[RMDB]
RNA sequence: GGGAACGACUCGAGUAGAGUCGAAAAGAUCACCUGUUCGCAGGUGAUCAAUCUCCCACUUCAUCGAAGUCUCACAGCCUCGUUGCCCACGAGGCACGGGCGUAUUGAUCCGCUUCGGCGGAUCAAAACCCUUGAGCAAAUUCGUUUGCUCAAGGGUAAAAGAAACAACAACAACAAC
Reactivity to 2A3 in 0.01 (KOAc 150mM, MgCl2 10mM, bicine 150mM(pH8.5), 24C), signal-to-noise 2, nucleotides 027 to 126: g000a000u000c000a000c000c000u000g030u040u060c220g010c100a000g000g000u000g000a000u010c000a010a010u030c020u000c000c000c020a020c030u140u100c000a210u110c100g050a070a010g100u010c020u060c140a140c020a040g000c010c000u130c080g080u160u110g030c020c030c000a150c080g000a240g020g030c000a000c000g020g000g000c020g000u040a020u090u100g000a000u000c000c010g030c030u040u030c170g130g000c000g030g010a010u000c000a000a000a020
Reactivity to DMS in 0.01 (KOAc 150mM, MgCl2 10mM, bicine 150mM(pH8.5), 24C), signal-to-noise 2, nucleotides 027 to 126: g010a000u000c010a000c000c000u000g000u000u000c260g030c000a010g000g010u000g010a000u000c010a020a100u000c280u000c000c000c030a130c100u000u000c080a070u000c090g010a070a050g000u000c080u010c180a120c230a060g010c000c000u010c040g000u030u010g010c070c040c040a180c220g000a190g000g010c000a010c050g000g040g000c040g010u000a020u000u020g000a020u000c000c000g030c010u010u000c170g000g030c000g000g000a010u000c000a000a000a090